This 170-nucleotide RNA was probed chemically with 2A3 and DMS. For 2A3, 6,638 sequencing reads were counted. The DMS profile rests on 7,859 reads. The reactions ran in a buffer of 150 mM KOAc, 10 mM MgCl2 and 150 mM bicine (pH 8.5), at 24 C. Reactivities are given for positions 27 through 129.
RNA sequence: GGGAACGACUCGAGUAGAGUCGAAAAGGAGGUCCCGAGGAGUAUCCAAGCAAAGAAGGGGAAGGAUCUCGAGGAAGACAUCUCCCAAGAAGAAGCGGGAACAAUCUCAAGAAGAGGAGGAUUCCCCAACCAUUGCGCUUCGGCGCAAUGAAAAGAAACAACAACAACAAC
Reactivity to 2A3 in 0.01 (KOAc 150mM, MgCl2 10mM, bicine 150mM(pH8.5), 24C), signal-to-noise 3, nucleotides 027 to 129: g030g050a020g040g040u020c020c000c000g010a020g020g010a010g000u130a050u020c070c030a120a000g020c030a030a070a120g030a020a030g030g000g000g000a010a000g000g000a040u020c020u000c020g020a010g000g050a000a010g020a050c010a100u050c040u010c010c000c000a030a010g030a020a000g000a040a000g070c020g020g010g000a020a000c040a030a070u050c010u020c060a040a040g040a050a010g000a070g050g010a020g000g000a030u030u040c010c030c000c000a010a000c020
Reactivity to DMS in 0.01 (KOAc 150mM, MgCl2 10mM, bicine 150mM(pH8.5), 24C), signal-to-noise 3, nucleotides 027 to 129: g040g000a030g020g060u020c030c000c010g050a080g020g030a060g060u020a040u030c110c070a100a160g010c160a060a100a080g060a050a080g000g040g040g030a020a080g010g030a040u020c030u020c000g010a030g050g050a020a060g010a080c000a040u020c000u030c070c040c030a100a050g020a120a030g010a050a060g040c070g010g040g040a060a070c110a040a030u040c030u000c050a080a020g020a000a040g030a050g000g000a050g000g000a200u030u000c030c050c000c170a010a010c090